[RMDB]
RNA sequence: GGGAACGACUCGAGUAGAGUCGAAAAAGCAAUAGAGUGGACCCUGGCGGCACGGUUGCCUUUAAGGUGAUGCUGAGGAGAGGCGGCAAGGACGACAAGACGCGCUCCGUGCAGGUGCCUCUGAGCGACUGUGUUAUGCUUUCGAGCAUAACACAGUAAAAGAAACAACAACAACAAC
Reactivity to 2A3 in 0.01 (KOAc 150mM, MgCl2 10mM, bicine 150mM(pH8.5), 24C), signal-to-noise 1, nucleotides 027 to 126: a000g050c040a050a030u100a110g150a040g090u100g070g030a040c020c010c000u030g090g030c050g000g000c000a000c060g130g000u080u050g050c000c000u040u150u100a150a040g030g010u050g020a060u110g040c020u040g030a000g060g000a040g000a040g110g040c010g000g000c010a010a050g060g020a030c090g030a070c080a090a070g080a070c050g060c000g010c100u000c000c030g040u030g000c040a020g060g080u050g030c000c000u020c020u020g010a040g000c030g020
Reactivity to DMS in 0.01 (KOAc 150mM, MgCl2 10mM, bicine 150mM(pH8.5), 24C), signal-to-noise 4, nucleotides 027 to 126: a080g020c050a050a090u030a050g000a100g020u000g020g010a130c090c020c020u010g010g000c060g010g000c030a050c100g010g010u010u000g020c020c030u000u000u020a120a070g000g020u000g010a140u000g010c030u010g000a090g010g010a080g000a070g010g000c010g000g020c030a050a140g000g000a080c080g000a070c080a080a190g010a080c100g030c030g000c110u000c010c010g000u010g020c020a060g000g010u010g000c010c010u000c040u000g010a180g020c070g010